[RMDB]
RNA sequence: GGGAACGACUCGAGUAGAGUCGAAAAAAUAAUUUUGGAUUAGGUCACCAUUUGAAAGAACAAGAGACUAUCAUUAGUUCUCACUUCUUUGUUUAUAGCAAGAGAAUAUUCUAUCAGGGGAGGAUUCCUACCAGUAGUGUUUCGACACUACUGGUAGAAAAGAAACAACAACAACAAC
Reactivity to 2A3 in 0.01 (KOAc 150mM, MgCl2 10mM, bicine 150mM(pH8.5), 24C), signal-to-noise 1, nucleotides 027 to 126: a020a000u210a060a060u140u120u100u240g130g040a080u080u030a060g010g080u070c030a010c060c000a090u210u000u080g040a060a050a010g020a020a020c070a300a080g000a000g020a060c000u020a010u200c140a160u180u080a000g040u230u050c010u000c000a030c070u020u040c000u080u050u050g050u020u150u070a240u170a050g000c000a060a000g080a040g030a230a110u140a080u030u100c030u010a010u110c010a000g050g000g010g050a020g050g000a030u060u060c010
Reactivity to DMS in 0.01 (KOAc 150mM, MgCl2 10mM, bicine 150mM(pH8.5), 24C), signal-to-noise 2, nucleotides 027 to 126: a080a070u030a070a080u000u020u000u000g020g010a080u000u010a050g010g010u010c060a070c030c040a060u000u000u000g010a050a060a050g000a010a010c160a090a150g010a050g000a030c010u000a040u000c170a170u010u000a030g020u000u000c000u000c010a170c140u000u010c010u000u000u010g010u000u000u010a070u020a150g000c070a050a030g000a020g010a030a030u010a100u000u000c020u000a070u000c030a060g010g010g010g000a050g000g010a120u010u010c070